[RMDB]
RNA sequence: GGGAACGACUCGAGUAGAGUCGAAAACCAGCAGCCAUGACCUACCAGGCUGCGGUGCGGCUCGCCGCACAGGUCAUCCCUCAUCGGGCGCGGCCUGCGUCCUUCCACGCCAACCCACAAGGGAUCUAAAACACGUUGGGCUUCGGCCCAACGUGAACACUGCUUCAAAGUUCGCUUUGAAGCAGUGAAAAGAAACAACAACAACAAC
Reactivity to 2A3 in 0.01 (KOAc 150mM, MgCl2 10mM, bicine 150mM(pH8.5), 24C), signal-to-noise 1, nucleotides 027 to 156: c000c000a030g000c000a000g000c040c010a130u120g020a030c000c000u090a170c120c090a030g000g000c000u010g010c020g010g000u010g000c000g010g010c010u130c250g190c010c010g020c000a000c020a020g010g000u020c010a120u080c030c000c000u050c000a150u110c050g020g000g000c020g000c030g060g040c040c090u040g020c050g080u010c020c080u070u100c040c000a060c060g010c000c000a020a030c000c020c000a030c040a060a090g000g010g020a010u030c050u210a060a070a050a060c010a000c010g000u000u000g000g000g000c010u010u030c200g100g000c000c000c000a000a000c010g000u000g000a000a000
Annotation:
Structure probing data (2A3) for a 207-nucleotide construct.